An RNA of 207 nucleotides, treated with DMS and 2A3 and read out base by base. DMS adducts were read by reverse transcription with MarathonRT.

RNA sequence: GGGAACGACUCGAGUAGAGUCGAAAAAGGGCAGGGUGAAAUUCCCGAUCGGCGGUAAAGUCCGCGAGCCGAACGAAAAAGGUUUGGCAGGAACCGGUGAGAUUCCGGUACCGACAGUAUAGUCUGUAUGACCACUUCAGCUUCGGCUGAAGUGGAAGUAAGAUUAAGACUUCGGUCUUAAUCUUACAAAAGAAACAACAACAACAAC
Reactivity to DMS in 0.01 (KOAc 150mM, MgCl2 10mM, bicine 150mM(pH8.5), 24C), signal-to-noise 1, nucleotides 027 to 156: a100g000g010g050c050a170g050g030g050u030g000a100a190a190u000u010c010c030c000g000a020u000c020g000g000c000g000g000u000a060a150a070g000u000c000c010g000c000g000a300g070c000c010g000a000a110c020g020a000a110a170a110a170g000g000u000u000u000g000g010c040a060g010g000a020a020c000c000g000g000u000g010a300g010a300u000u030c000c010g010g000u000a000c000c010g000a090c030a020g030u010a190u000a050g000u000c020u020g010u010a140u020g050a230c010c000a020c000u000u000c000a010g000c010u000u010c230g050g010c000u010g000a010a000g040u010g020g010a000a010
Reactivity to 2A3 in 0.01 (KOAc 150mM, MgCl2 10mM, bicine 150mM(pH8.5), 24C), signal-to-noise 1, nucleotides 027 to 156: a010g110g010g030c110a090g030g000g000u000g000a000a000a020u010u000c020c010c020g000a010u010c000g010g020c010g020g000u000a010a000a000g000u000c000c000g000c000g000a010g010c000c000g020a000a010c000g090a140a060a100a030a000g060g000u000u000u010g000g000c000a000g010g000a000a010c000c000g000g010u000g000a020g000a010u000u000c000c010g000g010u000a000c000c000g000a000c010a000g020u000a030u000a000g020u000c000u000g040u020a070u090g030a010c010c000a000c000u000u000c000a000g000c000u030u160c240g150g000c000u010g000a000a000g000u000g000g000a010a010
Notes:
The reactions ran in a buffer of 150 mM KOAc, 10 mM MgCl2 and 150 mM bicine (pH 8.5), at 24 C. For 2A3 the reverse transcriptase was SuperScript II with manganese. It was measured as part of the RMDB library M2RFPK.